RNA sequence: GGGAACGACUCGAGUAGAGUCGAAAACGGCUAGGUGAUAAACACGUCACCGAUUUCAUUAGAUCUGUCACCCUGGGUUCAGAAAUACCAAAAUAUGACCCGCAUGCGCGUCUAUUCACAAGUAACGGGGUGUCAGUAGGAAUGUUAAUAAGGAUAACGUUCCGUUAUAGUUCGCUAUAACGGAACGAAAAGAAACAACAACAACAAC
Reactivity to DMS in 0.01 (KOAc 150mM, MgCl2 10mM, bicine 150mM(pH8.5), 24C), signal-to-noise 1, nucleotides 027 to 156: c100g010g000c050u000a060g080g110u010g030a030u000a140a100a180c120a110c140g060u000c020a050c020c000g010a100u020u000u060c040a190u000u000a110g000a080u000c000u020g000u000c010a030c010c010c010u000g020g020g000u000u010c130a190g000a090a150a140u010a100c050c020a050a160a050a090u000a020u040g000a100c020c020c010g020c240a070u010g020c010g000c080g050u020c050u000a110u000u000c010a090c060a090a180g060u000a150a150c060g000g000g080g010u010g020u000c000a000g000u000a070g010g000a190a040u000g000u020u010a020a110u000a020a100g030g040a130u010a030a270
Reactivity to 2A3 in 0.01 (KOAc 150mM, MgCl2 10mM, bicine 150mM(pH8.5), 24C), signal-to-noise 3, nucleotides 027 to 156: c040g050g010c090u110a100g000g040u030g000a020u050a120a270a020c050a030c050g010u000c000a000c000c010g040a040u040u100u070c050a050u030u100a030g040a180u030c000u000g000u000c000a010c010c010c010u040g050g050g030u080u130c050a040g120a140a200a050u220a160c020c020a060a010a060a000u090a120u190g010a010c020c170c000g000c070a070u300g080c070g000c010g010u000c010u020a040u060u090c080a050c020a260a000g100u070a200a030c020g000g000g000g000u000g030u030c000a010g000u010a020g020g110a030a020u020g030u040u080a130a060u180a070a100g080g020a080u100a220a010
An RNA of 207 nucleotides, treated with DMS and 2A3 and read out base by base. The 2A3 profile rests on 1,259 reads. The reactions ran in a buffer of 150 mM KOAc, 10 mM MgCl2 and 150 mM bicine (pH 8.5), at 24 C.